[RMDB]
RNA sequence: GGGAACGACUCGAGUAGAGUCGAAAAGAUAUGGAAUCAUACGCACGCGAUAAGCUGCUAUCGGAAACGAUAGGUAGCUUUUGACGCGUGAAAUGAUUCCUAAGUCAAAAGGCCUCUUCGGAGGCCACUUCACUUAGGAGUUCGCUCCUAAGUGAAGAAAAGAAACAACAACAACAAC
Reactivity to DMS in 0.01 (KOAc 150mM, MgCl2 10mM, bicine 150mM(pH8.5), 24C), signal-to-noise 3, nucleotides 027 to 126: g000a030u010a300u010g000g010a030a010u000c000a010u000a100c300g000c000a010c000g020c000g010a140u010a020a020g020c000u010g000c010u000a000u010c000g000g000a110a050a180c000g010a020u000a020g020g030u010a010g000c000u000u000u000u010g000a220c100g030c000g020u000g010a000a010a010u000g010a000u000u000c000c000u020a030a100g000u000c050a090a070a110a070g020g010c000c000u000c010u000u010c170g060g010a020g010g010c000c010a000
Reactivity to 2A3 in 0.01 (KOAc 150mM, MgCl2 10mM, bicine 150mM(pH8.5), 24C), signal-to-noise 3, nucleotides 027 to 126: g030a010u100a050u180g010g000a010a000u030c000a010u020a050c300g000c050a000c010g010c020g110a060u010a230a010g000c000u010g030c000u000a000u000c000g030g040a100a060a020c030g010a000u010a050g190g170u100a010g000c000u100u020u020u140g180a070c070g000c000g000u000g000a000a010a000u010g000a010u000u010c010c000u010a070a010g080u030c030a010a040a100a260g010g010c030c010u000c020u070u110c300g200g010a000g010g000c000c000a000
Structure probing data (DMS and 2A3) for a 177-nucleotide construct.
Source: RMDB library TTRDES, as collected in RNAgym.
For 2A3 the reverse transcriptase was SuperScript II with manganese.